[RMDB]
RNA sequence: GGGAACGACUCGAGUAGAGUCGAAAAUACCGCAGGUCUGCGGUGCGGCAGUGUGGAGACCUGCCGUAAGCCGUGUUGUUUUGACAACCGGGAGAAAGCGUAUGCGGAGGCAGCGCUUUCAGGGUCUAAAAGUAUGGGAUCUUCGGAUCCCAUACAACUGUUUGUUCGUGUUCGCACGAACAAACAGAAAAGAAACAACAACAACAAC
Reactivity to 2A3 in 0.01 (KOAc 150mM, MgCl2 10mM, bicine 150mM(pH8.5), 24C), signal-to-noise 1, nucleotides 027 to 156: u120a000c020c000g020c020a020g060g170u120c110u070g000c010g000g000u000g000c010g010g010c010a010g010u030g020u060g230g110a040g040a140c000c000u000g000c010c000g000u000a050a000g130c040c030g060u070g000u020u000g000u010u010u010u060g050a040c020a000a050c030c000g000g000g030a150g000a020a000a000g020c010g000u050a280u180g000c020g010g120a070g290g000c000a000g000c000g000c000u010u000u010c010a030g000g010g000u000c020u030a090a070a000a010g000u000a000u000g000g000g000a000u000c010u040u050c230g050g000a000u030c040c000c000a010u000a000c000a000a000

Chemical mapping of a 207-nucleotide RNA with 2A3.
The reactions ran in a buffer of 150 mM KOAc, 10 mM MgCl2 and 150 mM bicine (pH 8.5), at 24 C.
Values cover nucleotides 27 to 156.
2A3 adducts were read by reverse transcription with SuperScript II with manganese.